An RNA of 207 nucleotides, treated with DMS and 2A3 and read out base by base.
DMS adducts were read by reverse transcription with MarathonRT.
For 2A3 the reverse transcriptase was SuperScript II with manganese.
The RNA was probed in 150 mM KOAc, 10 mM MgCl2 and 150 mM bicine (pH 8.5) at 24 C.
It was measured as part of the RMDB library M2RFPK.

RNA sequence: GGGAACGACUCGAGUAGAGUCGAAAAAGACCACCUCUACGGAGGUGGUCAAGUCACGUAGCUAGUACCAGGUUGCAAGACUAGAGCGUUAGUCCUGGGGCGUACGGUGGCAGUACGCUGCCACCGAUAAAACUUGAAUACUUCGGUAUUCAAGUAAACUUCCUAACUAGUUCGCUAGUUAGGAAGUAAAAGAAACAACAACAACAAC
Reactivity to DMS in 0.01 (KOAc 150mM, MgCl2 10mM, bicine 150mM(pH8.5), 24C), signal-to-noise 1, nucleotides 027 to 156: a150g000a060c010c020a010c000c000u000c000u010a110c290g110g020a050g160g040u010g000g000u000c000a010a020g000u000c050a110c040g010u000a050g010c010u010a060g000u000a120c030c050a120g000g010u000u000g000c030a120a120g010a040c010u000a050g000a230g000c030g000u020u010a070g000u000c000c010u000g000g010g010g010c120g050u000a030c010g010g050u000g050g000c010a080g080u000a040c280g000c020u000g000c010c000a010c000c000g000a020u000a000a080a120a070c000u000u000g000a050a010u000a010c010u000u020c300g010g010u000a000u000u000c000a020a010g010u000a010a070
Reactivity to 2A3 in 0.01 (KOAc 150mM, MgCl2 10mM, bicine 150mM(pH8.5), 24C), signal-to-noise 2, nucleotides 027 to 156: a000g000a000c000c000a020c020c000u000c000u020a090c300g120g000a000g030g000u000g000g000u000c000a000a010g030u000c020a000c010g000u020a020g100c000u010a010g010u030a160c000c010a000g030g010u010u020g010c000a010a010g010a000c010u000a000g000a000g020c090g070u150u250a010g010u090c000c000u000g010g000g030g020c120g090u210a070c050g010g000u000g010g000c010a050g020u010a010c300g030c100u000g000c000c000a030c000c000g000a000u050a020a080a010a010c000u000u000g000a000a000u000a000c000u000u060c160g020g000u010a000u000u010c000a000a000g000u000a040a000